[RMDB]
RNA sequence: GGGAACGACUCGAGUAGAGUCGAAAACAUGGUACAGGCCAUGUAGUAUAUCGAUCGGCCGAGGCCCGGCGCGAGAUGAGUACACAUCAUCGUACGACUGCGCGGCCCAGUACCGUAUGGCCUAUCGCACUAUCUGCGUAUUCGUACGCAGAUAGUGAAAAGAAACAACAACAACAAC
Reactivity to DMS in 0.01 (KOAc 150mM, MgCl2 10mM, bicine 150mM(pH8.5), 24C), signal-to-noise 8, nucleotides 027 to 126: c080a040u000g000g010u000a040c070a260g000g010c000c000a020u000g010u000a040g010u000a070u010a080u010c040g000a100u000c060g000g000c000c010g000a180g030g010c280c110c050g020g010c020g010c020g000a300g010a030u000g000a170g010u010a070c140a120c130a120u000c160a070u010c100g020u000a040c050g000a050c040u000g000c030g000c060g000g010c010c010c070a070g010u000a020c020c010g030u010a040u000g000g010c010c010u000a070u010c150g010
Reactivity to 2A3 in 0.01 (KOAc 150mM, MgCl2 10mM, bicine 150mM(pH8.5), 24C), signal-to-noise 3, nucleotides 027 to 126: c020a020u070g020g000u100a070c040a060g080g000c000c010a010u040g010u010a010g020u010a090u020a040u120c080g050a050u050c030g030g000c020c030g030a100g050g050c050c050c000g050g000c050g000c010g030a040g010a050u040g020a030g080u100a030c090a010c000a170u120c010a060u100c090g020u040a020c050g040a040c040u060g000c020g000c000g010g000c000c010c010a020g010u030a040c010c020g010u070a090u080g020g000c000c010u060a100u150c080g010

Source: RMDB library OK2TRN, as collected in RNAgym. Structure probing data (DMS and 2A3) for a 177-nucleotide construct. DMS adducts were read by reverse transcription with MarathonRT. 2A3 adducts were read by reverse transcription with SuperScript II with manganese. For DMS, 11,519 sequencing reads were counted. Reactivities are given for positions 27 through 126.